This 177-nucleotide RNA was probed chemically with DMS and 2A3. The reactions ran in a buffer of 150 mM KOAc, 10 mM MgCl2 and 150 mM bicine (pH 8.5), at 24 C. It was measured as part of the RMDB library TTRDEL. For 2A3, 7,925 sequencing reads were counted. Values are in units of 0.01, from 0 to 300, in steps of 10.

RNA sequence: GGGAACGACUCGAGUAGAGUCGAAAAGAUAUGGAAGCAGUGGAGUGAUAAGUUUGUGUCGGAAACGACAUUUGCUUUAACGUUGAAACUGCUUCCUAAGUCAAACACAAUCCUUCGGGAUUGUGAACGAUAUUCUGAGGUUCGCCUCAGAAUAUCGAAAAGAAACAACAACAACAAC
Reactivity to DMS in 0.01 (KOAc 150mM, MgCl2 10mM, bicine 150mM(pH8.5), 24C), signal-to-noise 3, nucleotides 027 to 126: g000a020u010a290u010g000g010a030a010g010c010a010g030u020g010g010a100g020u010g010a140u020a020a010g020u000u000u000g020u000g010u000c000g020g000a100a060a110c010g030a010c000a000u000u000u000g010c000u000u000u000a150a030c070g000u000u010g000a150a130a020c000u000g020c000u000u010c000c000u010a010a070g000u000c020a110a110a270c000a010c000a000a000u000c010c000u000u010c160g020g000g010a000u000u010g010u000g000a040a070
Reactivity to 2A3 in 0.01 (KOAc 150mM, MgCl2 10mM, bicine 150mM(pH8.5), 24C), signal-to-noise 4, nucleotides 027 to 126: g010a000u020a010u070g010g000a000a000g000c000a000g020u010g030g050a040g030u220g120a240u080a300a000g010u010u020u040g020u010g000u010c000g010g030a020a030a020c000g000a000c000a010u040u010u010g000c010u070u080u150a300a080c140g160u190u090g000a020a030a000c000u000g000c000u000u000c000c000u000a000a010g000u000c010a030a140a000c010a000c010a010a010u000c010c000u020u080c300g120g000g000a000u020u000g000u000g010a070a010